[RMDB]
RNA sequence: GGGAACGACUCGAGUAGAGUCGAAAACUUAACGCGUUCGCGCGUUAAGAAACAACAUAAACAUCGAGUUGACGAUGACACAUAUACCGUCAGUGUAGACGGAAAGCAUUCGCUUCGGCGAAUGCAACCCCAAUUAAUGCUUCGGCAUUAAUUGGGGAAAAGAAACAACAACAACAAC
Reactivity to DMS in 0.01 (KOAc 150mM, MgCl2 10mM, bicine 150mM(pH8.5), 24C), signal-to-noise 2, nucleotides 027 to 126: c000u000u000a000a010c010g010c000g000u000u000c180g040c010g030c000g020u010u000a030a000g000a110a150a070c130a080a080c150a060u020a100a080a050c030a020u000c000g000a210g020u010u000g000a120c050g030a010u000g000a110c170a090c130a100u000a120u000a050c030c010g000u000c010a130g000u000g000u010a080g000a000c000g000g000a030a020a060g000c000a000u000u010c000g010c000u000u010c250g020g000c000g000a040a000u010g020c000a030a010
Reactivity to 2A3 in 0.01 (KOAc 150mM, MgCl2 10mM, bicine 150mM(pH8.5), 24C), signal-to-noise 4, nucleotides 027 to 126: c000u000u000a000a000c000g050c010g010u040u080c210g000c000g000c000g130u010u020a000a000g010a010a080a010c040a010a030c010a080u210a140a130a010c000a010u030c010g020a070g130u080u120g190a120c010g010a030u060g080a020c000a000c020a180u180a010u080a300c010c000g010u000c020a070g050u080g150u300a090g000a010c010g030g000a060a050a000g010c000a000u000u000c000g000c000u030u060c240g100g000c000g000a000a000u010g020c000a000a010
Structure probing data (DMS and 2A3) for a 177-nucleotide construct. For DMS the reverse transcriptase was MarathonRT. For DMS, 1,769 sequencing reads were counted. Conditions: 150 mM KOAc, 10 mM MgCl2 and 150 mM bicine (pH 8.5), 24 C. For 2A3, 3,478 sequencing reads were counted. 2A3 adducts were read by reverse transcription with SuperScript II with manganese.